[RMDB]
RNA sequence: GGGAACGACUCGAGUAGAGUCGAAAAAUUAUCAGAACAAUGUCUUUAUGUCUGAAGCUAAAUGCUGGGUGGAAACCGAUCUGAAGAAAGGGCCACAUGAAUUCUGUUCACAGCAUACGCUUUAUAUUAGGGUGGUACUUCGGUACCACCAAAAGAAACAACAACAACAAC
Reactivity to DMS in 0.01 (KOAc 150mM, MgCl2 10mM, bicine 150mM(pH8.5), 24C), signal-to-noise 2, nucleotides 027 to 129: a110u020u030a050u030c080a090g000a230a170c110a110a150u040g000u000c070u030u070u080a090u020g000u050c040u030g000a020a000g020c000u010a020a220a000u020g010c010u020g000g000g000u010g000g000a050a080a050c000c030g030a220u050c030u040g010a040a070g000a040a020a190g000g020g070c060c000a010c000a100u020g030a030a110u030u040c130u000g030u050u010c100a050c000a020g050c110a040u040a040c120g010c000u010u010u070a060u020a090u060u000a060g040
Reactivity to 2A3 in 0.01 (KOAc 150mM, MgCl2 10mM, bicine 150mM(pH8.5), 24C), signal-to-noise 4, nucleotides 027 to 129: a000u260u200a110u090c000a020g110a040a020c060a030a100u140g110u090c040u040u170u100a060u110g050u000c010u060g010a000a000g000c020u040a160a280a020u020g020c010u000g100g000g000u020g000g060a070a100a000c010c010g020a010u000c030u070g120a110a080g000a010a120a000g000g030g050c010c000a000c070a010u090g100a010a000u090u080c100u200g070u020u020c050a010c010a020g010c000a010u000a040c040g000c010u060u050u010a130u040a010u020u060a070g010